[RMDB]
RNA sequence: GGGAACGACUCGAGUAGAGUCGAAAAGCAAAUAAUGGGCGCCCAAGGUGAGAUGAAGCUGUAGUCUCACUGGAAGGACUAGAGGUUAGAGGACACCCGCCCAAAACAAGAAACAGCAAGAAAAAAACAUCUAACGUAACUUCGGUUACGUUAGAUGAAAAGAAACAACAACAACAAC
Reactivity to 2A3 in 0.01 (KOAc 150mM, MgCl2 10mM, bicine 150mM(pH8.5), 24C), signal-to-noise 2, nucleotides 027 to 126: g020c010a090a040a030u180a140a090u260g010g000g000c010g010c010c000c000a000a010g000g000u000g000a010g000a010u010g000a010a020g000c010u000g000u020a000g000u000c000u000c000a010c000u010g000g000a000a020g010g010a010c060u170a100g000a020g080g050u130u100a080g020a100g230g040a020c020a000c000c000c000g000c000c000c000a040a070a000a010c100a100a060g210a140a110a010c000a010g000c000a050a050g210a080a080a000a000a010a000a010
Reactivity to DMS in 0.01 (KOAc 150mM, MgCl2 10mM, bicine 150mM(pH8.5), 24C), signal-to-noise 2, nucleotides 027 to 126: g040c180a110a150a090u000a060a130u000g000g020g030c010g000c020c010c010a190a080g000g000u040g000a030g000a000u000g020a010a190g000c000u000g020u010a300g000u010c000u030c000a080c020u000g000g020a150a250g000g010a060c040u010a090g000a110g000g000u000u000a050g000a060g010g010a120c060a070c000c020c000g010c000c000c000a050a080a130a120c210a090a100g000a090a220a000c000a020g030c010a120a130g040a070a000a050a090a070a070a070